[RMDB]
RNA sequence: GGGAACGACUCGAGUAGAGUCGAAAAUCUUAACUUCGGUUAAGAAAAAAGCGUACUACCUCAGAGGAUCAUGGAGUACCGUUCCCAAAUAGGAACGAGUACUAUGAAGUGAUCUACCCACCUGAGGUAUCGCAAAAAAGUCAAGUUCGCUUGACAAUGUGUAUAGGAGAUUCGUCUCCUAUACACAAAAAGAAACAACAACAACAAC
Reactivity to DMS in 0.01 (KOAc 150mM, MgCl2 10mM, bicine 150mM(pH8.5), 24C), signal-to-noise 3, nucleotides 027 to 156: u000c000u000u000a000a020c010u010u010c300g070g010u000u010a000a030g010a000a080a080a130a080a270g000c030g010u000a030c040u000a030c000c000u010c000a000g000a240g020g000a020u000c010a010u000g000g000a020g010u000a000c010c010g020u000u000c000c000c000a020a210a220u000a040g010g010a040a000c000g010a230g030u000a010c000u000a090u000g000a170a300g000u000g000a010u020c000u000a020c000c000c030a300c040c000u000g000a010g010g000u010a010u000c010g000c020a000a070a030a140a090a110g010u000c010a030a030g000u000u010c270g010c020u000u000g000a060c010a060a140
Reactivity to 2A3 in 0.01 (KOAc 150mM, MgCl2 10mM, bicine 150mM(pH8.5), 24C), signal-to-noise 3, nucleotides 027 to 156: u010c000u000u010a000a020c010u040u090c210g070g010u000u020a010a010g000a140a090a030a010a010a000g010c010g020u050a060c020u000a000c010c000u000c000a000g010a010g010g010a000u000c000a000u030g070g000a000g000u000a000c000c000g010u000u010c000c020c010a020a140a070u110a040g000g000a000a000c010g010a090g090u010a010c000u050a240u220g050a020a000g000u000g000a000u030c000u040a060c050c040c010a050c000c000u000g000a000g000g000u000a000u010c000g000c000a070a020a010a060a040a050g020u020c010a000a000g040u060u100c150g050c140u010u000g000a010c000a060a120
Structure probing data (DMS and 2A3) for a 207-nucleotide construct. The DMS profile rests on 7,447 reads. 2A3 adducts were read by reverse transcription with SuperScript II with manganese. The data come from the RNA Mapping Database (RMDB), library RNAMAK.